This 177-nucleotide RNA was probed chemically with 2A3 and DMS. The data come from the RNA Mapping Database (RMDB), library OK2TRN. Values cover nucleotides 27 to 126.

[RMDB]
RNA sequence: GGGAACGACUCGAGUAGAGUCGAAAAAGGCGGCCAUCGCGACAAACGCCCUCACCCGGCCGGACGACGCGCCGUCGCGAGCGCCGAGGGCGACGGGCCGCGCCCAUUGCCGGCAAUUCGCCGCCGAGUAGGUCCAAAAUUUCGAUUUUGGACCUACAAAAGAAACAACAACAACAAC
Reactivity to 2A3 in 0.01 (KOAc 150mM, MgCl2 10mM, bicine 150mM(pH8.5), 24C), signal-to-noise 2, nucleotides 027 to 126: a030g030g000c040g020g000c020c000a130u140c090g000c030g100a060c110a000a100a010c010g000c030c000c000u000c000a080c010c070c010g000g050c000c050g140g000a130c040g010a030c010g160c120g080c150c100g010u020c000g000c020g020a020g010c110g000c020c100g000a000g000g010g030c020g010a020c010g000g000g000c000c010g000c000g000c000c000c000a050u080u140g080c060c000g000g020c020a080a170u230u150c100g030c010c010g000c010c000g020a040
Reactivity to DMS in 0.01 (KOAc 150mM, MgCl2 10mM, bicine 150mM(pH8.5), 24C), signal-to-noise 2, nucleotides 027 to 126: a010g000g010c030g000g000c010c020a070u020c040g010c060g000a090c190a070a140a300c110g000c000c010c020u000c070a120c070c170c120g010g000c080c010g010g000a140c060g000a060c080g020c250g030c220c090g010u000c020g020c030g000a280g010c190g020c060c000g000a050g000g000g000c010g000a030c050g010g000g000c030c000g030c070g000c010c010c010a160u000u010g010c130c000g020g000c030a090a190u010u000c110g000c060c030g030c040c020g010a150